[RMDB]
RNA sequence: GGGAACGACUCGAGUAGAGUCGAAAAGAAUACUCAGACAAAGCCCAGACUUUGGAGAGCGCCACAUUGCGUUAUUCCUUAAAUCCCAAUGGGUGAAGAAAAAUGAGAAAAUCGGCGCAGUCAACGAUGACUGCACUAAUUUCGAUUAGUGCAGUCAAAAAGAAACAACAACAACAAC
Reactivity to 2A3 in 0.01 (KOAc 150mM, MgCl2 10mM, bicine 150mM(pH8.5), 24C), signal-to-noise 3, nucleotides 027 to 126: g020a040a060u120a140c030u020c030a000g030a160c050a070a070a000g000c010c010c010a040g030a110c080u050u060u080g010g000a030g000a000g020c000g020c020c010a100c030a150u040u170g000c010g000u040u030a150u120u000c000c000u030u080a120a110a100u090c020c000c000a040a040u070g000g030g030u070g040a090a030g090a030a080a020a020a010u100g000a040g060a090a060a000a050u080c050g030g000c040g020c040a010g060u050c030a040a020c040g020a040
Reactivity to DMS in 0.01 (KOAc 150mM, MgCl2 10mM, bicine 150mM(pH8.5), 24C), signal-to-noise 5, nucleotides 027 to 126: g000a180a110u000a120c030u010c030a060g010a170c120a050a110a260g000c010c030c040a070g010a140c100u000u000u010g000g010a080g000a050g000c040g010c010c130a100c250a100u000u010g010c020g010u000u010a090u010u000c020c000u010u000a030a070a130u000c010c010c030a080a160u010g010g010g020u000g020a060a120g010a030a040a050a080a100u000g010a060g000a070a030a110a090u010c070g000g000c060g020c030a060g000u000c080a060a090c120g000a120
The record gives the reactivity of an RNA of 177 nucleotides to 2A3 and DMS. It was measured as part of the RMDB library OK2TRN. The DMS profile rests on 4,751 reads. The RNA was probed in 150 mM KOAc, 10 mM MgCl2 and 150 mM bicine (pH 8.5) at 24 C. Values are in units of 0.01, from 0 to 300, in steps of 10. For 2A3, 2,378 sequencing reads were counted.